Source: RMDB library OK1LIB, as collected in RNAgym.
Structure probing data (2A3 and DMS) for a 177-nucleotide construct.
For 2A3, 20,217 sequencing reads were counted.
The RNA was probed in 150 mM KOAc, 10 mM MgCl2 and 150 mM bicine (pH 8.5) at 24 C.
For DMS, 44,505 sequencing reads were counted.
For DMS the reverse transcriptase was MarathonRT.
Reactivities are given for positions 27 through 126.
[RMDB]
RNA sequence: GGGAACGACUCGAGUAGAGUCGAAAAGGCGCGCAGCAAUGUCAGUGAUAAAUUACACCAUAAGUGUAGACGCUGAGACAAUGUGAGCAGCUAGUACUACUGAUGGCGAGACACAAUAUGCUGAUGCGAUUAUAUAUUUUUUCGAAAAUAUAUAAUCAAAAGAAACAACAACAACAAC
Reactivity to 2A3 in 0.01 (KOAc 150mM, MgCl2 10mM, bicine 150mM(pH8.5), 24C), signal-to-noise 9, nucleotides 027 to 126: g070g010c010g000c010g000c040a010g000c010a020a060u080g050u050c010a010g010u010g060a060u100a180a140a040u130u030a030c020a010c020c030a070u060a270a080g020u010g000u010a010g010a060c010g000c010u000g010a000g030a060c090a080a110u130g020u040g040a020g020c010a000g000c010u040a030g050u050a090c050u040a030c030u090g070a070u080g080g000c020g010a030g030a020c010a000c000a040a060u130a050u090g010c010u020g010a120u080g020c010
Reactivity to DMS in 0.01 (KOAc 150mM, MgCl2 10mM, bicine 150mM(pH8.5), 24C), signal-to-noise 9, nucleotides 027 to 126: g000g020c070g010c030g010c010a040g010c010a050a080u030g010u000c020a030g000u010g000a120u040a050a060a100u030u010a040c030a050c000c080a090u060a110a260g010u000g010u000a000g000a130c060g010c000u000g000a040g010a100c130a110a080u020g010u020g000a050g000c020a240g000c000u000a050g010u020a080c090u030a060c090u020g020a060u010g000g010c020g000a230g000a050c020a020c040a070a080u020a110u010g010c010u000g000a070u010g020c070